[RMDB]
RNA sequence: GGGAACGACUCGAGUAGAGUCGAAAAUCGACUUCCUUCGGGAAGUCGAAAAUAACGGUCGCCUCAUGAAGCUAGUCGAACAUGCUGCUCGACCUAGACUAAAAAGAAUCUCGUUCGCGAGAUUCAAGCAUAGGACAUAGUUCGCUAUGUCCUAUGCAAAAGAAACAACAACAACAAC
Reactivity to 2A3 in 0.01 (KOAc 150mM, MgCl2 10mM, bicine 150mM(pH8.5), 24C), signal-to-noise 3, nucleotides 027 to 126: u010c010g000a000c000u010u020c010c000u000u060c160g060g000g000a010a000g000u000c000g000a010a000a010a000u060a050a020c070g020g010u020c030g020c020c000u040c020a030u070g060a060a010g050c040u080a040g200u230c030g020a080a070c020a020u080g030c020u020g010c040u070c050g000a010c010c010u010a030g070a110c040u160a080a080a020a030a000g000a020a000u000c010u010c000g010u040u050c290g000c010g050a000g010a030u020u010c010a010a000
Reactivity to DMS in 0.01 (KOAc 150mM, MgCl2 10mM, bicine 150mM(pH8.5), 24C), signal-to-noise 4, nucleotides 027 to 126: u000c030g000a010c000u000u000c020c000u000u020c220g010g010g020a010a000g010u000c000g000a000a030a060a060u000a080a070c220g000g000u000c020g000c300c020u010c060a070u000g000a090a210g020c030u000a050g000u010c040g010a060a060c010a060u010g010c160u010g020c090u000c000g000a010c090c030u010a050g010a090c080u020a020a050a050a120a090g010a010a010u000c000u000c000g030u000u020c220g040c010g000a020g000a010u000u000c010a070a110
About this RNA
Structure probing data (2A3 and DMS) for a 177-nucleotide construct. For 2A3 the reverse transcriptase was SuperScript II with manganese. Conditions: 150 mM KOAc, 10 mM MgCl2 and 150 mM bicine (pH 8.5), 24 C.